[RMDB]
Chemical mapping of a 177-nucleotide RNA with DMS.
The data come from the RNA Mapping Database (RMDB), library TTRINS.
RNA sequence: GGGAACGACUCGAGUAGAGUCGAAAAGAUAUGGAGACCACUUCGGUACGCUUCGAUGAACUACUCCGGGGUGGUCGGAAACGACCACAAGGAGCAUCGAGAGCGUACCGAAGUGGUCUCCUAAGUCGUAUUACUCUAUGUUCGCAUAGAGUAAUACAAAAGAAACAACAACAACAAC
Reactivity to DMS in 0.01 (KOAc 150mM, MgCl2 10mM, bicine 150mM(pH8.5), 24C), signal-to-noise 1, nucleotides 027 to 126: g000a140u010a300u000g010g030a030g010a000c010c000a020c000u030u000c000g000g020u000a020c020g020c030u000u000c000g020a020u000g000a060a070c070u020a300c010u000c020c010g000g010g020g030u000g000g030u000c000g010g020a070a080a300c020g000a000c000c010a010c020a220a160g000g000a010g030c010a020u000c000g000a050g010a010g020c000g060u000a000c050c000g020a000a000g000u000g020g000u000c000u000c000c000u000a000a050g000u000c110